[RMDB]
RNA sequence: GGGAACGACUCGAGUAGAGUCGAAAAGGACAAAUUCCGUGACCGUGUUAGGCCAGCAUCGAAGAGCAUACCUAGCUGCGUUUCAACCUGCGUGGGUUGGGGCGGCUUAGCGGAUUAAUGAAAGUUCUACCCUAGUGGUACUUACCCCAUGCAAAGUCGAAUAGUCCCAGUUCGCUGGGACUAUUCGAAAAGAAACAACAACAACAAC
Reactivity to 2A3 in 0.01 (KOAc 150mM, MgCl2 10mM, bicine 150mM(pH8.5), 24C), signal-to-noise 2, nucleotides 027 to 156: g050g000a070c010a020a090a040u080u000c010c030g000u010g050a040c000c110g060u020g010u110u020a060g000g020c120c140a030g000c020a040u100c160g230a230a180g010a100g020c060a030u060a130c000c000u000a000g010c000u000g090c030g010u000u010u100c020a010a010c040c000u140g060c150g110u300g010g000g040u020u020g000g000g000g000c000g030g000c020u050u060a010g000c000g000g040a050u050u160a130a100u180g100a100a000a050g070u050u000c020u030a080c000c020c000u010a030g070u000g120g000u050a040c020u090u120a070c000c000c000c030a050u110g010c110a110a090a000g070u060
Structure probing data (2A3) for a 207-nucleotide construct. It was measured as part of the RMDB library VIROID. 2A3 adducts were read by reverse transcription with SuperScript II with manganese.